[RMDB]
RNA sequence: GGGAACGACUCGAGUAGAGUCGAAAAUAAGCACUGGAGAUGACCCUUGAGGGAGGUUUCACUCUGCAGAGAUCUCUCCCCCGUCGCGUGGCGGGUGGGAACACGUUAGUGCGGGGGGAUUUGGGAUGGCAAAUGGAUAAGAUGGAACAGCCAACUGGUAAUUAACUUGCUUCGGCAAGUUAAUUACAAAAGAAACAACAACAACAAC
Reactivity to 2A3 in 0.01 (KOAc 150mM, MgCl2 10mM, bicine 150mM(pH8.5), 24C), signal-to-noise 2, nucleotides 027 to 156: u130a030a010g020c000a020c130u090g000g070a100g020a110u070g060a060c010c020c030u050u100g060a210g010g010g010a030g000g030u060u080u050c030a060c030u090c060u120g010c060a010g030a030g000a100u010c020u040c020u070c000c000c000c000c020g030u050c060g020c060g050u070g040g000c120g060g040g000u100g010g000g000a030a010c040a000c050g010u110u160a060g040u050g060c010g010g000g000g010g020g030a000u110u050u090g030g000g010a030u020g040g000c000a000a080a070u080g020g010a050u060a080a010g030a050u100g000g040a060a030c000a010g040c010c020a040a020c070u040g030